RNA sequence: GGGAACGACUCGAGUAGAGUCGAAAAUAGCGAAGUAGGAUUUUAUGCGUCAAGUGUUCACAGGCUGGGGAGUCGCCGUGAAACGAAAAGCAGAAAGCGUGCUGCGUACGAUAUAAUUUCCGCACCCAUAAGAAGUCUCUGUUCGCAGAGACUUCAACUGAUGAUUCAGUUUCGACUGAAUCAUCAGAAAAGAAACAACAACAACAAC
Reactivity to DMS in 0.01 (KOAc 150mM, MgCl2 10mM, bicine 150mM(pH8.5), 24C), signal-to-noise 2, nucleotides 027 to 156: u000a080g010c040g030a060a050g020u020a050g020g020a080u000u000u000u000a030u010g020c030g000u000c030a070a270g020u000g000u000u000c020a050c010a070g080g000c020u000g030g000g000g010a150g010u000c000g010c010c010g030u000g010a050a070a050c020g010a080a050a060a080g020c020a080g000a070a060a080g020c080g030u000g000c030u000g010c040g030u020a020c080g000a110u010a070u010a060a190u000u000u000c030c010g030c010a140c000c000c020a200u000a110a170g030a000a000g020u000c020u000c000u000g030u000u000c300g020c000a020g000a060g000a000c000u000u000c000a000a090
Reactivity to 2A3 in 0.01 (KOAc 150mM, MgCl2 10mM, bicine 150mM(pH8.5), 24C), signal-to-noise 4, nucleotides 027 to 156: u150a020g040c040g070a130a010g050u090a080g040g030a020u020u020u020u020a020u050g010c010g010u030c070a090a080g030u060g070u180u020c030a020c100a110g020g000c030u110g020g010g010g060a040g080u110c040g000c010c020g020u010g010a040a020a000c020g020a040a030a060a050g000c030a010g060a070a130a030g140c110g060u100g040c010u010g010c010g020u050a010c020g030a010u000a000u010a120a040u030u020u000c000c000g000c030a050c010c010c000a030u060a070a080g010a000a000g000u000c000u000c000u000g050u040u070c190g000c060a000g000a000g000a000c000u000u000c000a000a000
Chemical mapping of a 207-nucleotide RNA with DMS and 2A3. The data come from the RNA Mapping Database (RMDB), library M2RFPK.